[RMDB]
Background: An RNA of 177 nucleotides, treated with DMS and 2A3 and read out base by base. For 2A3 the reverse transcriptase was SuperScript II with manganese. For DMS the reverse transcriptase was MarathonRT.

RNA sequence: GGGAACGACUCGAGUAGAGUCGAAAACUGGCUGAUAACGGCGGCGCAUGGGUAAGCUACUUCGGUGGUAACUUCAACGGCGACAACGGCACCAUCAACUAUGAUCAGGAUGUUAACGGCAUCAUGGGCUUAUAGCAUCAUUCGUGAUGCUAUAAGCAAAAGAAACAACAACAACAAC
Reactivity to DMS in 0.01 (KOAc 150mM, MgCl2 10mM, bicine 150mM(pH8.5), 24C), signal-to-noise 6, nucleotides 027 to 126: c060u000g020g000c030u010g020a100u010a080a100c080g010g010c090g010g010c040g010c060a060u000g020g000g010u010a040a090g000c040u010a060c060u000u010c120g040g010u000g000g010u010a050a050c070u000u000c060a090a110c060g000g010c030g010a070c080a050a070c110g010g000c040a060c050c050a060u000c060a050a100c110u010a060u000g000a070u000c030a060g000g000a050u000g020u000u010a040a080c150g010g000c030a030u000c050a060u000g010g000
Reactivity to 2A3 in 0.01 (KOAc 150mM, MgCl2 10mM, bicine 150mM(pH8.5), 24C), signal-to-noise 6, nucleotides 027 to 126: c010u010g080g010c030u030g040a110u070a200a030c040g040g010c000g010g010c010g010c030a060u080g000g000g070u080a100a030g020c020u040a030c020u070u070c060g080g000u040g020g040u050a070a050c020u080u070c050a060a030c060g050g000c010g030a030c040a060a030c030g020g000c020a020c030c000a050u050c010a010a080c060u110a080u180g040a080u080c030a030g060g010a020u020g010u070u040a080a020c050g050g000c010a010u010c010a040u060g050g060